Source: RMDB library OK3TST, as collected in RNAgym. Chemical mapping of a 207-nucleotide RNA with DMS and 2A3. For DMS, 3,701 sequencing reads were counted. For DMS the reverse transcriptase was MarathonRT.
[RMDB]
RNA sequence: GGGAACGACUCGAGUAGAGUCGAAAAUAGUAACACCUGUUACACUAAUAGAACCCCAGCUUCCUGAGGAGAUGGUACGAAUUGCUCUUGAGCCUACAAUCUCCACACCGUUCUUAAACAAUGCCCACUGGACUGCGUGACCUACACCACCAGCCUGGCUGGUGUUAUCAUUCGUGAUAACACCAGCAAAAGAAACAACAACAACAAC
Reactivity to DMS in 0.01 (KOAc 150mM, MgCl2 10mM, bicine 150mM(pH8.5), 24C), signal-to-noise 2, nucleotides 027 to 156: u000a130g000u010a050a100c040a200c130c140u000g020u000u060a130c060a140c040u000a090a090u000a110g030a080a150c080c020c000c010a090g040c020u000u000c020c010u000g000a110g020g010a090g020a060u000g020g020u000a110c100g020a090a110u000u010g010c020u000c060u040u020g010a110g010c020c010u000a070c030a060a050u010c030u000c010c020a090c040a020c030c020g030u000u000c040u000u040a110a080a040c070a050a090u000g000c000c000c010a110c070u000g030g010a060c030u000g000c080g040u000g010a120c040c030u020a060c050a070c040c010a030c010c000a040g010c040c010u020g010
Reactivity to 2A3 in 0.01 (KOAc 150mM, MgCl2 10mM, bicine 150mM(pH8.5), 24C), signal-to-noise 7, nucleotides 027 to 156: u130a010g020u020a030a010c050a090c070c130u090g010u040u040a020c060a020c060u110a040a140u090a140g070a080a060c010c010c000c000a020g030c040u110u070c020c020u060g050a070g020g020a040g010a030u040g030g020u020a030c060g040a140a200u160u100g010c020u040c010u160u210g100a030g010c000c000u020a020c020a020a040u010c000u000c000c000a010c020a010c010c020g070u080u040c010u050u130a080a070a020c050a060a100u100g040c000c000c010a030c030u040g010g050a100c030u040g020c040g050u030g020a060c000c010u050a040c030a030c060c000a000c020c000a010g010c010c010u060g060
For 2A3 the reverse transcriptase was SuperScript II with manganese. Conditions: 150 mM KOAc, 10 mM MgCl2 and 150 mM bicine (pH 8.5), 24 C.